The record gives the reactivity of an RNA of 207 nucleotides to DMS and 2A3. The 2A3 profile rests on 8,061 reads. It was measured as part of the RMDB library M2RFPK. For DMS the reverse transcriptase was MarathonRT.
RNA sequence: GGGAACGACUCGAGUAGAGUCGAAAAAGGUGACUUCUCCUGCACCUUUAUCAAUGGAGGAACUCGACUUUGCUGUGGGUCCCAAAGGGACCUUAGGUGCAGACAGUUACCGGCGGUGAAGUGUGAGCAUAGGUUCGUGUCUUCGGACACGAACCAACAUAGAAUAGGGGUUCGCCCCUAUUCUAUGAAAAGAAACAACAACAACAAC
Reactivity to DMS in 0.01 (KOAc 150mM, MgCl2 10mM, bicine 150mM(pH8.5), 24C), signal-to-noise 3, nucleotides 027 to 156: a060g010g020u000g010a140c020u000u000c050u000c070c010u000g050c010a030c000c010u000u000u010a040u010c070a060a120u010g010g010a300g020g000a050a060c040u000c040g020a040c040u000u000u000g020c030u000g030u000g000g020g000u000c000c010c030a060a170a220g010g020g000a020c020c010u000u000a010g050g040u000g020c020a080g010a110c300a090g010u000u000a030c020c010g010g030c060g000g010u010g010a040a120g000u010g010u000g030a100g010c050a090u010a100g010g020u000u000c000g030u010g010u000c010u000u000c300g050g010a020c000a020c000g000a000a000c000c000a020a050
Reactivity to 2A3 in 0.01 (KOAc 150mM, MgCl2 10mM, bicine 150mM(pH8.5), 24C), signal-to-noise 5, nucleotides 027 to 156: a010g010g000u010g000a020c000u060u000c030u060c050c010u030g010c000a010c010c000u060u120u100a160u090c050a050a060u120g050g010a040g030g040a090a070c060u030c070g050a040c060u070u080u080g030c040u070g030u180g040g000g000u020c000c000c030a130a120a110g020g000g000a000c000c000u020u050a010g000g000u000g000c000a000g030a080c020a010g000u010u020a010c000c000g010g000c030g010g010u050g040a090a060g040u040g020u030g080a050g030c070a100u100a200g000g000u000u000c000g000u000g000u000c010u020u070c240g070g000a000c000a000c000g000a000a000c000c000a000a000